[RMDB]
RNA sequence: GGGAACGACUCGAGUAGAGUCGAAAAAAAUGCUAACCAUCGUAAAAUAAGGCUAAUGCGUGGCAGUCAUUCAUUAAAUUGUUCUCAAAUUUUUCAUUGGUGAAUUAUUAGCUUGCUCAGUUCCAGCUUCUGGGCAUUCCUUGAGAAUUUGAUAUCCAUAUGUCAAACUGUUCGCAGUUUGACAUAUAAAAGAAACAACAACAACAAC
Reactivity to DMS in 0.01 (KOAc 150mM, MgCl2 10mM, bicine 150mM(pH8.5), 24C), signal-to-noise 1, nucleotides 027 to 156: a000a000a000u000g010c050u010a100a070c030c010a080u020c030g040u000a040a060a110a100u010a080a080g020g000c060u000a090a090u000g040c080g000u000g000g030c030a080g030u000c040a040u000u000c030a120u010u000a050a130a080u000u010g020u000u010c010u000c030a060a040a120u000u000u000u000u000c020a080u010u030g000g080u010g010a090a110u000u000a110u000u000a050g020c080u000u000g030c020u010c020a050g010u010u010c060c130a150g020c080u000u000c030u020g030g000g030c020a050u000u000c030c000u000u000g000a070g000a050a040u000u000u000g010a040u000a080u000c050c080
Reactivity to 2A3 in 0.01 (KOAc 150mM, MgCl2 10mM, bicine 150mM(pH8.5), 24C), signal-to-noise 2, nucleotides 027 to 156: a000a000a000u090g010c000u000a050a020c010c000a030u110c060g030u080a030a030a050a140u100a220a080g060g000c040u060a060a000u050g030c030g000u010g030g000c010a000g070u150c000a020u100u050c020a020u050u170a150a160a080u100u100g030u050u040c020u000c000a070a150a030u060u060u020u110u040c030a030u010u140g040g000u070g130a140a030u010u120a060u150u070a150g040c000u030u040g000c010u010c020a020g010u160u000c080c040a030g050c070u100u060c010u010g010g030g010c000a000u070u040c000c010u020u030g050a050g040a020a020u140u060u080g040a020u030a030u100c030c040

The record gives the reactivity of an RNA of 207 nucleotides to DMS and 2A3. 2A3 adducts were read by reverse transcription with SuperScript II with manganese. The 2A3 profile rests on 937 reads. For DMS the reverse transcriptase was MarathonRT. The DMS profile rests on 2,604 reads. Source: RMDB library OK3TST, as collected in RNAgym. The RNA was probed in 150 mM KOAc, 10 mM MgCl2 and 150 mM bicine (pH 8.5) at 24 C. Reactivities are rounded to 0.1 and cut off at 0 and 3.